[RMDB]
RNA sequence: GGGAACGACUCGAGUAGAGUCGAAAAGCUGUAGAUCAGAAGCCUCAAAGGAAGCCCAAGGGUCCAAGCAUCUCGCUCUCCUCUCUCUGCUCCCUGCUCACCCUCCCCUCCCAGGCCUCUGCAUCCCGAUCCUAUUUAGCUUCGGCUAAAUAGGAUCAAAAGAAACAACAACAACAAC
Reactivity to DMS in 0.01 (KOAc 150mM, MgCl2 10mM, bicine 150mM(pH8.5), 24C), signal-to-noise 1, nucleotides 027 to 126: g000c060u010g020u000a110g010a060u000c030a080g000a130a130g010c010c020u010c070a100a090a160g010g010a030a100g000c020c030c040a080a100g000g000g010u000c020c110a080a130g000c080a040u010c090u010c070g020c040u000c020u040c030c020u030c010u000c000u010c020u010g010c040u010c030c030c020u000g040c020u000c060a160c030c010c000u000c000c020c030c000u010c020c000c020a120g000g020c050c030u020c000u010g020c050a130u010c000c000c030

An RNA of 177 nucleotides, treated with DMS and read out base by base. For DMS the reverse transcriptase was MarathonRT. The reactions ran in a buffer of 150 mM KOAc, 10 mM MgCl2 and 150 mM bicine (pH 8.5), at 24 C.